Chemical mapping of a 207-nucleotide RNA with 2A3.

RNA sequence: GGGAACGACUCGAGUAGAGUCGAAAAGGCUCGCCACAAGUGAUUGUCUCAAUUGCUUGGGUUCAAAAGUAGAGAAUCGUCCAAUCCAUCCUGACUGUCGGAUCGGUGCGGAUUAAAUUUAAAGACAGAAACUAAACAUGUAGAUUCAUGAGCGUAACCACUCAGUACGCUUCGGCGUACUGAGUGGAAAAGAAACAACAACAACAAC
Reactivity to 2A3 in 0.01 (KOAc 150mM, MgCl2 10mM, bicine 150mM(pH8.5), 24C), signal-to-noise 1, nucleotides 027 to 156: g080g000c020u050c000g000c000c000a120c050a040a010g000u050g010a050u090u130g100u080c010u000c030a000a000u000u000g020c000u000u010g010g020g000u040u000c060a180a100a070a000g160u250a050g050a000g000a070a030u000c000g000u000c010c000a000a000u000c000c000a000u000c000c000u030g090a060c000u000g020u020c010g010g010a000u000c010g010g000u030g000c030g020g090a000u060u100a000a000a000u120u150u090a010a010a000g010a000c000a000g100a020a070a000c140u140a030a020a020c000a000u030g050u080a070g070a150u240u300c000a000u020g040a000g150c100g120u090a020a040
Conditions: 150 mM KOAc, 10 mM MgCl2 and 150 mM bicine (pH 8.5), 24 C.